[RMDB]
RNA sequence: GGGAACGACUCGAGUAGAGUCGAAAAUCUAAACCUAGAGAACGUAGUGAUUCCAAACCUAGGGACACAACACCUAAGAAUGCCAACAAACACACCUGGAAGAAAACUGCAGGCAAGGGAGAUGUGACAACUUUCUAUGGUGCUAGAAGUAGUUCAGUGUUGCAGUCUUAUUCGUAAGACUGCAACAAAAAGAAACAACAACAACAAC
Reactivity to 2A3 in 0.01 (KOAc 150mM, MgCl2 10mM, bicine 150mM(pH8.5), 24C), signal-to-noise 3, nucleotides 027 to 156: u050c020u050a000a040a130c030c000u060a060g020a000g010a180a020c040g070u090a050g020u060g140a180u090u080c050c020a030a120a040c090c010u050a050g040g020g020a000c020a000c030a080a090c070a050c020c010u060a050a030g030a080a000u110g050c080c030a060a000c020a050a160a000c030a010c010a030c040c020u030g000g020a040a030g020a110a200a020a030c080u060g050c060a030g030g020c040a010a030g020g020g000a090g010a050u070g040u070g050a050c000a070a050c080u010u050u000c030u030a030u080g020g000u020g060c030u040a000g000a080a040g020u120a000g020u030u040c080a070g060
Reactivity to DMS in 0.01 (KOAc 150mM, MgCl2 10mM, bicine 150mM(pH8.5), 24C), signal-to-noise 1, nucleotides 027 to 156: u000c060u000a010a100a170c010c030u020a130g010a150g030a150a010c050g000u000a110g000u000g010a180u000u010c010c020a060a100a190c160c020u000a060g010g030g000a150c040a070c070a040a080c050a060c030c000u030a120a100g030a090a110u000g010c000c040a090a090c030a120a110a060c070a030c030a090c020c010u000g040g020a120a210g000a100a040a060a110c060u000g030c000a000g020g060c030a040a050g000g030g010a030g030a120u000g010u000g000a110c010a030a060c080u010u000u000c040u000a050u000g050g000u010g020c030u030a130g010a060a070g030u010a080g030u010u010c010a120g060